Conditions: 150 mM KOAc, 10 mM MgCl2 and 150 mM bicine (pH 8.5), 24 C. Structure probing data (DMS) for a 177-nucleotide construct.

RNA sequence: GGGAACGACUCGAGUAGAGUCGAAAAAACUGAACCGAUUCAAGAACGUUUUCGGCGUUCGCAUUGCGCUGUUCGUUGUGGAGUCUGACGAUCCGGACUACUACGAGAAACCGUUCAAUCCGGAUGGAUCAAUUAGAGCCUUCGGGCUCUAAUUGAUAAAAGAAACAACAACAACAAC
Reactivity to DMS in 0.01 (KOAc 150mM, MgCl2 10mM, bicine 150mM(pH8.5), 24C), signal-to-noise 1, nucleotides 027 to 126: a040a120c090u020g030a070a080c090c030g010a100u010u010c150a100a110g010a050a010c050g010u000u010u000u000c130g020g010c000g010u000u010c080g030c110a180u030u000g000c100g010c010u000g000u000u000c090g040u050u030g040u020g000g000a070g010u000c010u000g010a190c200g000a050u000c070c010g000g000a030c020u000a120c030u000a020c030g010a090g000a140a070a070c120c030g030u020u000c060a090a250u000c050c010g050g000a090u010g030g020

The DMS profile rests on 696 reads. The data come from the RNA Mapping Database (RMDB), library OK2TRN.